[RMDB]
RNA sequence: GGGAACGACUCGAGUAGAGUCGAAAACCACUUUCGAGUGGCUACGCCCGUAGGAGCGAACUACGAAGGGGACAUUCGAAGAACUGGGAUUCGAAAGAGUCCCAGGGAGAAUGUCCGACUUCGCGCUCCUAAACGGAGUUUCUGAAUUCGUUCAGAAGACAAAUUAGUCUUUCGAGACUAAUUUGUCAAAAGAAACAACAACAACAAC
Reactivity to 2A3 in 0.01 (KOAc 150mM, MgCl2 10mM, bicine 150mM(pH8.5), 24C), signal-to-noise 2, nucleotides 027 to 156: c000c000a010c040u120u100u080c260g080a030g020u000g000g000c030u100a050c090g110c020c000c020g020u020a020g010g000a000g040c010g030a080a080c090u150a060c300g000a000a000g010g020g010g030a000c010a010u000u010c050g240a300a020g000a070a000c000u000g000g020g020a000u010u000c020g040a130a080a130g000a010g020u010c010c020c000a000g000g000g000a010g000a000a000u000g000u000c000c000g060a100c000u000u000c000g000c000g000c010u000c000c000u000a090a000a000c020g090g010a130g040u080u050u020c030u020g050a100a090u130u090c180g060u110u080c050a030g080a070a060
Reactivity to DMS in 0.01 (KOAc 150mM, MgCl2 10mM, bicine 150mM(pH8.5), 24C), signal-to-noise 1, nucleotides 027 to 156: c010c000a020c010u010u020u030c190g030a020g050u010g000g040c000u000a040c080g050c000c000c030g040u000a030g000g000a040g000c010g010a080a210c070u020a130c000g020a010a050g010g000g000g000a000c010a060u010u010c010g030a130a150g030a180a220c000u030g030g050g020a090u000u010c000g020a190a160a220g000a010g000u000c000c000c020a000g010g010g000a140g000a040a020u000g020u000c000c000g000a010c140u000u000c000g000c000g000c000u000c010c000u000a010a020a090c020g000g010a180g000u000u010u000c000u000g000a030a100u000u000c170g000u000u000c050a040g010a080a180